[RMDB]
The data come from the RNA Mapping Database (RMDB), libraries RFM100 and RFMREP. An RNA of 177 nucleotides, treated with DMS and 2A3 and read out base by base. The RNA was probed in 150 mM KOAc, 10 mM MgCl2 and 150 mM bicine (pH 8.5) at 24 C. For DMS the reverse transcriptase was MarathonRT.
RNA sequence: GGGAACGACUCGAGUAGAGUCGAAAACUUACUACAUAACGAAUCAAUCUUUCGCCUUUUACUAAAGAUUGCCGUGUAGGAGGUACUUUAAAUACAAUACCACAAAUUUUUGUCACGUCAUUUUUGGCAGUACCCAUAGGUUCGCCUAUGGGUACUGAAAAGAAACAACAACAACAAC
Reactivity to DMS in 0.01 (KOAc 150mM, MgCl2 10mM, bicine 150mM(pH8.5), 24C), signal-to-noise 4, nucleotides 027 to 126: c010u010u000a120c020u000a000c030a050u030a300a120c050g020a140a130u000c030a030a050u000c020u020u010u000c120g000c130c150u020u040u020u030a200c040u000a020a020a000g010a010u030u000g000c160c050g010u000g010u000a010g000g010a080g030g000u020a030c140u000u030u020a030a070a090u030a040c100a130a080u010a040c020c010a040c100a010a060a130u020u000u010u000u020g000u000c080a090c150g000u020c090a080u010u000u000u000u000g010g000
Reactivity to 2A3 in 0.01 (KOAc 150mM, MgCl2 10mM, bicine 150mM(pH8.5), 24C), signal-to-noise 5, nucleotides 027 to 126: c010u020u140a110c010u000a010c000a090u170a180a070c100g060a060a090u170c010a020a010u000c000u030u030u040c040g090c050c060u200u270u190u290a100c040u060a020a010a000g010a010u000u000g020c000c040g050u030g020u010a020g000g030a020g020g020u040a050c050u090u140u130a100a070a040u170a080c060a070a080u070a130c040c000a020c070a120a150a150u140u150u060u110u110g130u070c050a040c150g040u020c110a080u020u030u020u050u030g080g000